[RMDB]
RNA sequence: GGGAACGACUCGAGUAGAGUCGAAAAUAGGAAAUGAAAGCUCCGUUAGAAGAAAGAAGAGCUGUGUCACGAUUGCAGCUUGCGUUUCGGUGACAUCUCUUGCCGUCAGGCGCCACUUCAGUUUUUUUGUCAAUAUCGCGCAAGCAGCUUACGAAAGCGUAGGGAAAAAUUUCGAUUUUUCCCUACGAAAAGAAACAACAACAACAAC
Reactivity to DMS in 0.01 (KOAc 150mM, MgCl2 10mM, bicine 150mM(pH8.5), 24C), signal-to-noise 2, nucleotides 027 to 156: u000a070g020g010a080a130a070u000g000a060a070a140g000c020u010c020c070g030u010u000a150g020a130a160g010a110a180a140g020a130a070g010a030g040c160u010g020u010g000u000c070a080c030g010a130u000u010g000c060a120g010c040u000u010g010c030g010u000u000u000c080g040g020u010g020a010c000a060u000c050u000c050u000u000g070c020c060g010u000c120a160g020g020c080g020c040c040a030c050u000u000c040a110g020u000u000u000u000u000u000u000g010u000c080a080a110u010a110u020c070g030c020g010c010a050a020g010c010a140g020c030u000u030a090c060g010a090a130a160g000
Reactivity to 2A3 in 0.01 (KOAc 150mM, MgCl2 10mM, bicine 150mM(pH8.5), 24C), signal-to-noise 3, nucleotides 027 to 156: u130a030g010g020a040a030a040u060g000a170a110a030g040c030u020c020c020g010u010u050a060g020a230a020g030a100a180a000g060a010a010g000a000g010c130u100g040u030g020u040c020a000c050g050a060u000u280g010c020a010g000c000u000u030g000c000g010u030u050u200c120g050g030u010g000a020c000a020u010c050u010c010u040u040g050c010c020g010u020c050a080g020g030c040g010c040c040a070c000u060u070c020a100g000u020u030u050u010u020u090u170g070u040c010a040a020u080a060u250c080g010c000g000c020a000a000g010c010a000g010c020u040u090a030c040g090a070a300a000g130
The record gives the reactivity of an RNA of 207 nucleotides to DMS and 2A3. 2A3 adducts were read by reverse transcription with SuperScript II with manganese. The data come from the RNA Mapping Database (RMDB), library OK3TST. For DMS the reverse transcriptase was MarathonRT. For 2A3, 1,283 sequencing reads were counted.